[RMDB]
Chemical mapping of a 177-nucleotide RNA with DMS and 2A3. The reactions ran in a buffer of 150 mM KOAc, 10 mM MgCl2 and 150 mM bicine (pH 8.5), at 24 C. High DMS reactivity at an A or C suggests that its Watson-Crick edge is free. 2A3 is a SHAPE reagent: it acylates the 2'-hydroxyl of flexible nucleotides of all four kinds. For 2A3, 2,800 sequencing reads were counted. The data come from the RNA Mapping Database (RMDB), library OK2TRN.

RNA sequence: GGGAACGACUCGAGUAGAGUCGAAAAAUCCUAGCGCGACUAGGUACACGUCUGAUCGUACGCGGUACGUGUGAUCCACAUGGGAUCCUCUCAUGGCACGAUCGCCAUGGAUCAUGUCAUGGCGUACAUGCAUGGGGGAAUUCGUUCCCCCAUGCAUAAAAGAAACAACAACAACAAC
Reactivity to DMS in 0.01 (KOAc 150mM, MgCl2 10mM, bicine 150mM(pH8.5), 24C), signal-to-noise 3, nucleotides 027 to 126: a090u000c000c020u000a010g020c030g060c220g020a130c020u000a000g000g000u000a100c100a070c070g010u000c070u010g010a060u000c130g030u010a010c090g040c000g020g010u010a070c050g010u000g010u010g000a030u000c010c050a160c240a110u030g000g020g000a010u000c030c050u000c030u010c070a060u000g020g000c060a030c100g000a020u000c000g020c060c180a040u000g020g010a030u000c050a040u010g010u010c000a030u000g000g000c030g020u020a000c090
Reactivity to 2A3 in 0.01 (KOAc 150mM, MgCl2 10mM, bicine 150mM(pH8.5), 24C), signal-to-noise 3, nucleotides 027 to 126: a000u010c000c000u040a010g020c300g040c120g230a300c020u000a010g000g010u040a040c020a010c050g040u020c050u080g090a120u100c070g020u050a000c050g000c070g080g020u070a010c030g020u000g020u060g060a000u000c010c020a120c060a280u110g250g000g000a010u020c030c020u000c010u020c010a130u130g070g000c030a010c050g000a020u040c010g050c100c040a070u120g080g020a040u030c010a010u060g070u060c000a000u060g060g050c000g010u030a020c050